Overview: This 207-nucleotide RNA was probed chemically with 2A3 and DMS. For DMS, 5,546 sequencing reads were counted. The reactions ran in a buffer of 150 mM KOAc, 10 mM MgCl2 and 150 mM bicine (pH 8.5), at 24 C. DMS adducts were read by reverse transcription with MarathonRT. The 2A3 profile rests on 10,317 reads.

RNA sequence: GGGAACGACUCGAGUAGAGUCGAAAACACGCCCUUCGGGGCGUGAAAAAUCCUAAGUCUACCUCAGCUGCUAGACAUGAGCUAUCGGAAACGAUAGCUCAACAGCUAGCAGAACUACUGACGGUAGAUAUGGAAAAAAGAACUGUUCGCAGUUCAAGCAUAAUAUAAGUUUCGACUUAUAUUAUGCAAAAGAAACAACAACAACAAC
Reactivity to 2A3 in 0.01 (KOAc 150mM, MgCl2 10mM, bicine 150mM(pH8.5), 24C), signal-to-noise 6, nucleotides 027 to 156: c000a000c000g000c000c000c000u020u050c170g040g000g000g000c000g010u000g000a000a010a000a000a000u040c020c000u040a120a030g030u000c000u000a000c000c000u010c010a000g010c010u010g000c000u010a010g020a160c020a140u030g000a000g000c000u000a000u000c010g030g040a080a030a040c010g010a000u000a000g000c000u010c000a010a000c000a000g020c000u000a000g000c000a000g010a000a020c110u300a030c000u010g010a020c150g010g000u000a000g000a000u000a010u000g010g020a060a080a000a050a010a060g050a010a000c010u020g030u150u120c300g010c150a010g000u020u020c020a030a030
Reactivity to DMS in 0.01 (KOAc 150mM, MgCl2 10mM, bicine 150mM(pH8.5), 24C), signal-to-noise 3, nucleotides 027 to 156: c010a040c000g030c020c000c010u000u010c300g050g000g000g070c000g000u000g000a000a040a040a090a110u000c010c000u000a060a180g030u000c000u000a000c010c000u000c010a020g000c000u000g000c000u000a010g010a040c050a300u000g020a000g010c010u000a010u000c010g010g000a150a180a290c010g010a020u000a010g000c020u000c000a000a040c100a190g010c020u000a000g010c020a070g000a060a100c070u000a290c010u010g000a010c120g010g010u000a010g020a010u000a100u000g000g010a000a050a120a060a110a130g000a030a040c010u000g010u010u010c200g020c010a020g000u010u010c020a090a300